[RMDB]
Source: RMDB library RNAMAK, as collected in RNAgym. This 207-nucleotide RNA was probed chemically with DMS and 2A3. The 2A3 profile rests on 8,810 reads.
RNA sequence: GGGAACGACUCGAGUAGAGUCGAAAAGGGGUCGCAACGUAGAGAUCCCUGGAGGCGAGGAUCAUACUGAAGCCUCCACGGUAUGGGAGCCUCCCUGGAUGUAGUUGCGACGGAGGCACCCUGGGGAUAUGGUAACAUAUUCGUAUGUUACCAUAUCGUGGUAUUUAGUAUUCGUACUAAAUACCACAAAAGAAACAACAACAACAAC
Reactivity to DMS in 0.01 (KOAc 150mM, MgCl2 10mM, bicine 150mM(pH8.5), 24C), signal-to-noise 2, nucleotides 027 to 156: g000g040g030g020u000c030g010c010a060a090c070g040u020a180g010a110g010a090u000c010c000c030u000g020g040a040g030g020c010g000a220g030g010a130u010c130a130u010a100c030u010g000a130a260g000c000c000u000c020c000a030c030g000g000u000a120u010g000g000g000a090g000c010c020u000c000c000c040u000g000g020a090u000g000u000a130g000u000u000g030c010g010a080c010g010g030a040g070g050c030a140c000c010c000u000g040g000g010g020a030u000a000u000g010g000u020a010a020c000a010u000a060u000u010c260g050u000a020u000g020u000u000a010c000c000a000u000a000u000c000
Reactivity to 2A3 in 0.01 (KOAc 150mM, MgCl2 10mM, bicine 150mM(pH8.5), 24C), signal-to-noise 4, nucleotides 027 to 156: g010g020g060g010u010c000g010c030a040a010c030g180u300a090g030a010g020a260u050c010c000c000u000g010g000a000g000g000c020g030a150g030g000a020u080c020a050u090a100c020u060g050a130a020g010c000c000u000c000c010a000c010g010g020u070a040u070g010g000g010a020g000c000c000u010c000c010c010u010g010g010a050u070g060u280a110g000u020u020g010c010g010a010c000g000g000a000g000g000c010a060c010c010c010u060g000g020g000g030a000u000a000u000g000g000u010a000a000c020a000u020a020u060u080c170g030u060a000u000g000u000u000a000c000c000a000u000a000u000c010